An RNA of 177 nucleotides, treated with DMS and read out base by base. The reactions ran in a buffer of 150 mM KOAc, 10 mM MgCl2 and 150 mM bicine (pH 8.5), at 24 C. It was measured as part of the RMDB library M2PK50.
[RMDB]
RNA sequence: GGGAACGACUCGAGUAGAGUCGAAAACAUAAUGACUUCGGUCAUUAUGAAAUAAAGGCAGUCGACUGCGCGCGGCACAGUCACGCGCUGACGCCACGACAAAAAUCGGGACCUUCGGGUCCCGAAAGUUGGUAAACACGUUCGCGUGUUUACCAACAAAAGAAACAACAACAACAAC
Reactivity to DMS in 0.01 (KOAc 150mM, MgCl2 10mM, bicine 150mM(pH8.5), 24C), signal-to-noise 1, nucleotides 027 to 126: c010a020u000a000a000u000g000a020c000u000u040c170g050g020u000c000a010u020u000a000u000g000a050a090a080u010a200a050a170g010g000c010a130g020u000c010g000a180c160u010g010c050g070c020g000c010g040g000c020a140c140a080g000u000c000a040c030g000c030g010c040u000g000a000c020g030c030c020a030c110g000a050c090a050a180a040a150a100u000c020g010g000g000a000c000c000u020u000c200g040g000g000u010c000c000c000g020a000a000a000